[RMDB]
Source: RMDB library RFM100, as collected in RNAgym. The record gives the reactivity of an RNA of 177 nucleotides to 2A3 and DMS. DMS adducts were read by reverse transcription with MarathonRT.

RNA sequence: GGGAACGACUCGAGUAGAGUCGAAAAAGCCUGGUCUACGGACCAGGCAAUGCAUGGGGAGGAGGGAGGAGAUGGGCCACGUUCCCUCUGCCUGGAACGCCCUUCCCCCCCUUCUUCACCUAGCGAAAGGUAGUGUAUGGUUCGCCAUACACUACCUAAAAGAAACAACAACAACAAC
Reactivity to 2A3 in 0.01 (KOAc 150mM, MgCl2 10mM, bicine 150mM(pH8.5), 24C), signal-to-noise 3, nucleotides 027 to 126: a000g010c010c000u010g000g000u000c000u010a110c300g080g000a000c010c000a010g000g000c000a000a000u070g000c000a020u040g000g000g000g000a000g000g010a010g010g030g010a130g050g040a180g010a050u020g010g010g040c080c100a160c060g010u020u010c010c030c010u030c090u050g050c010c060u010g020g000a000a000c020g050c000c000c000u000u000c000c000c000c000c000c000c000u000u000c000u020u000c060a210c030c010u030a040g000c020g050a100a100
Reactivity to DMS in 0.01 (KOAc 150mM, MgCl2 10mM, bicine 150mM(pH8.5), 24C), signal-to-noise 2, nucleotides 027 to 126: a080g010c000c000u020g020g000u000c000u000a070c220g000g010a000c000c010a000g000g000c000a000a000u030g000c020a250u000g000g020g000g000a010g020g000a010g010g010g000a060g000g010a030g010a000u010g000g010g020c060c300a210c070g020u000u050c000c000c150u050c120u040g020c150c100u000g010g010a070a010c010g010c010c000c000u000u010c000c000c010c020c000c000c000u000u060c000u010u000c040a080c010c010u040a260g000c030g000a100a070
Conditions: 150 mM KOAc, 10 mM MgCl2 and 150 mM bicine (pH 8.5), 24 C.